[RMDB]
RNA sequence: GGGAACGACUCGAGUAGAGUCGAAAAUGAAACCAUUAGAUCACCCUGAGAUCAAGCCUGAGUUAGUCUAUUUGGAGUCAUGUGGCCCAUUUACUUCAUCACUUCAGCCAACAGCCAGUGCUAACUGACAGACAGAAUGAAUCAUCAGGCAGGUGAGCAUACCCGAAAACUUCGGUUUUCGGGUAUGAAAAGAAACAACAACAACAAC
Reactivity to 2A3 in 0.01 (KOAc 150mM, MgCl2 10mM, bicine 150mM(pH8.5), 24C), signal-to-noise 5, nucleotides 027 to 156: u140g010a090a020a010c030c010a070u040u180a050g060a080u020c010a010c010c010c040u040g010a020g020a040u030c030a040a040g030c010c000u010g020a020g010u010u060a010g010u050c070u080a140u150u100u110g050g000a030g070u070c030a070u060g020u080g080g000c040c030c020a060u150u120u110a100c050u080u090c000a070u070c040a040c070u090u040c060a020g030c010c020a070a030c010a100g050c040c010a030g000u030g080c030u030a040a030c000u050g080a050c000a040g050a030c010a030g110a070a070u050g050a050a050u060c060a050u010c010a070g020g010c040a010g060g000u010g010a010g010
Reactivity to DMS in 0.01 (KOAc 150mM, MgCl2 10mM, bicine 150mM(pH8.5), 24C), signal-to-noise 3, nucleotides 027 to 156: u000g020a230a100a150c020c050a180u000u000a150g010a200u010c020a040c020c010c030u000g000a150g020a130u000c060a110a220g010c010c020u000g010a070g010u010u000a070g000u000c040u000a110u000u000u010g040g020a070g010u000c060a060u000g020u000g010g000c000c010c160a100u010u000u010a040c030u010u010c040a090u000c030a060c040u000u000c040a120g030c020c040a030a110c060a140g020c010c040a030g040u000g040c110u010a060a060c010u010g000a040c000a110g000a100c050a080g000a040a040u000g000a050a070u000c040a090u000c020a010g020g040c070a060g010g000u000g000a120g040